[RMDB]
RNA sequence: GGGAACGACUCGAGUAGAGUCGAAAAGCGAACCCUAAGGCCGAUCUGCGGCAGAAGGCCGCGGCGGCGGCCGGCGCCAGCGGGUUCUACGCGAAGUGGUUGCCGAAGCUGGUUUUCGGCGAAGGCCCACUCCCUGACUGUUCGCAGUCAGGGAGUGAAAAGAAACAACAACAACAAC
Reactivity to DMS in 0.01 (KOAc 150mM, MgCl2 10mM, bicine 150mM(pH8.5), 24C), signal-to-noise 3, nucleotides 027 to 126: g040c100g010a100a130c000c020c020u000a170a240g010g020c000c020g010a110u010c000u000g010c000g000g020c010a080g010a150a140g020g020c040c000g030c000g000g000c070g000g010c040g000g000c000c030g010g020c300g010c030c030a030g050c050g010g010g020u000u000c010u000a030c060g010c100g000a100a110g020u000g000g020u000u010g000c000c010g010a060a140g010c060u000g020g000u000u000u000u000c000g010g010c000g000a090a140g000g000c020c030
Reactivity to 2A3 in 0.01 (KOAc 150mM, MgCl2 10mM, bicine 150mM(pH8.5), 24C), signal-to-noise 1, nucleotides 027 to 126: g020c000g020a070a100c020c000c000u110a170a120g010g000c000c000g020a110u010c020u060g000c000g010g000c040a060g240a140a060g280g030c000c000g000c010g020g020c040g030g050c000g000g000c000c000g000g010c030g050c010c020a030g000c030g030g030g000u070u020c040u100a030c020g040c040g050a130a040g010u040g060g050u150u260g000c010c030g110a090a030g010c040u100g030g160u060u000u050u110c010g000g000c020g000a020a010g080g030c070c000
Chemical mapping of a 177-nucleotide RNA with DMS and 2A3. It was measured as part of the RMDB library OK2TRN. For 2A3 the reverse transcriptase was SuperScript II with manganese. For DMS the reverse transcriptase was MarathonRT.